[RMDB]
RNA sequence: GGGAACGACUCGAGUAGAGUCGAAAACAGACAUUCAUUUUUAUCCAGUUUCUUCUCAAAGUGAAGAUAACUUUUUGUAAAUGUCCUAAAGUCAUGUAGAAUGUAGUAGCUUUCUGUUCACACUGUACAUAACGGAUGACUUCGGUCAUCCGUUAUGAAAAGAAACAACAACAACAAC
Reactivity to 2A3 in 0.01 (KOAc 150mM, MgCl2 10mM, bicine 150mM(pH8.5), 24C), signal-to-noise 1, nucleotides 027 to 126: c020a010g080a000c020a040u010u080c030a070u080u080u160u180u130a050u100c040c000a010g010u000u000u090c000u020u020c020u050c030a100a190a060g060u050g030a010a010g000a010u140a030a070c000u050u070u050u010u030g090u050a050a090a000u040g010u110c000c030u080a090a000a020g060u020c000a060u070g030u120a050g070a090a050u070g000u060a090g000u000a000g060c010u070u190u010c080u040g040u040u010c060a060c000a030c050u110g040u140a000
Reactivity to DMS in 0.01 (KOAc 150mM, MgCl2 10mM, bicine 150mM(pH8.5), 24C), signal-to-noise 2, nucleotides 027 to 126: c110a120g010a050c050a010u000u010c030a080u020u000u010u010u000a100u060c110c160a060g000u000u000u000c000u000u000c010u000c160a060a050a150g030u010g000a010a040g010a040u000a020a040c000u000u000u000u000u000g010u000a030a020a030u000g010u000c020c120u000a040a050a070g010u030c040a020u000g000u000a040g010a040a020u000g000u000a070g000u000a070g000c050u000u000u000c020u010g020u000u010c050a070c070a050c070u000g020u000a160